The record gives the reactivity of an RNA of 207 nucleotides to 2A3 and DMS.
The 2A3 profile rests on 13,861 reads.
For DMS the reverse transcriptase was MarathonRT.
Source: RMDB library VIROID, as collected in RNAgym.
[RMDB]
RNA sequence: GGGAACGACUCGAGUAGAGUCGAAAAUACUUGCUUCGGGGCGAGGGUGUUUAGCCCUUGGAACCGCAGUUGGUUCCUCGGAACUAAACUCGUGGUUCCUGUGGUUCACACCUGACCUCCUGAGCAGAAAAGGAAAAGGAAGGCGGCUCGGAGGAGCGAGCAAUGUUAAGUUCGCUUAACAUUGCUCAAAAGAAACAACAACAACAAC
Reactivity to 2A3 in 0.01 (KOAc 150mM, MgCl2 10mM, bicine 150mM(pH8.5), 24C), signal-to-noise 6, nucleotides 027 to 156: u090a020c050u040u070g010c000u020u040c040g000g000g000g000c010g010a020g000g020g000u010g020u030u110u140a020g010c000c030c000u010u030g000g000a000a000c000c000g000c000a010g000u010u020g010g010u000u000c010c010u020c200g080g010a000a000c010u130a300a060a060c010u110c190g000u020g000g000u000u010c010c000u010g060u160g000g010u030u040c050a000c000a000c000c000u020g010a030c000c000u000c000c000u000g000a000g000c000a000g040a010a110a000a010g020g020a050a070a020a020g030g020a030a020g020g010c020g010g000c030u040c060g030g040a040g010g010a030g040c060
Reactivity to DMS in 0.01 (KOAc 150mM, MgCl2 10mM, bicine 150mM(pH8.5), 24C), signal-to-noise 3, nucleotides 027 to 156: u000a080c040u000u000g010c020u000u000c300g030g030g020g020c030g010a300g010g010g050u010g020u000u000u010a100g010c030c010c010u010u010g020g010a020a050c010c000g010c020a110g000u000u000g020g020u000u000c000c010u000c260g050g000a030a030c000u000a030a040a030c000u010c090g070u000g030g030u000u000c000c030u000g030u000g030g030u000u000c300a060c030a020c010c000u000g010a220c220c000u000c000c030u000g000a020g040c000a040g000a040a030a070a060g030g010a040a030a070a120g000g000a130a030g040g020c020g010g000c020u000c020g010g010a080g020g010a070g010c090